[RMDB]
RNA sequence: GGGAACGACUCGAGUAGAGUCGAAAACAGAUGUUUCGACAUCUGAAAAAAGCGUACUACCGUUGACAUGAACGCUCGCUACCCACCUCCCAAAUAGGAGAGGCGAGAGUGGUUCAACAGCAACGGUAUCGCAAAAAUCCAUUCUUCGGAAUGGAAAUAGUAGAAGGGAGUUCGCUCCCUUCUACUAAAAAGAAACAACAACAACAAC
Reactivity to DMS in 0.01 (KOAc 150mM, MgCl2 10mM, bicine 150mM(pH8.5), 24C), signal-to-noise 2, nucleotides 027 to 156: c000a000g020a010u010g020u000u000u010c290g040a120c000a010u000c010u010g010a010a080a070a040a110a110g000c030g000u010a070c160u000a000c020c000g050u000u000g000a160c100a300u020g010a030a010c020g000c000u000c000g010c050u000a080c070c010c170a300c110c010u000c000c010c000a080a180a110u000a090g000g040a000g050a070g060g020c080g010a050g050a080g080u010g050g020u020u010c000a000a070c130a200g000c000a050a070c000g020g030u000a020u030c020g000c080a030a080a100a100a210u000c010c000a000u000u020c010u000u020c300g070g000a000a000u000g000g000a000a050a050
Reactivity to 2A3 in 0.01 (KOAc 150mM, MgCl2 10mM, bicine 150mM(pH8.5), 24C), signal-to-noise 1, nucleotides 027 to 156: c000a000g020a020u010g030u050u240u170c120g040a030c000a000u000c020u030g070a070a010a100a000a000a000g000c010g050u060a170c040u010a000c000c020g000u000u000g110a170c040a100u080g000a020a010c010g000c040u040c000g100c010u060a120c110c020c050a060c010c020u000c000c030c000a240a240a070u280a200g000g000a020g000a010g000g000c000g010a020g020a010g050u300g080g020u020u010c030a140a090c020a070g020c000a000a000c000g000g030u000a000u000c000g000c000a080a210a000a000a000u000c010c000a020u030u020c000u050u120c300g080g000a030a020u000g000g040a020a020a020
Structure probing data (DMS and 2A3) for a 207-nucleotide construct. Values cover nucleotides 27 to 156. The RNA was probed in 150 mM KOAc, 10 mM MgCl2 and 150 mM bicine (pH 8.5) at 24 C. For 2A3 the reverse transcriptase was SuperScript II with manganese. DMS adducts were read by reverse transcription with MarathonRT.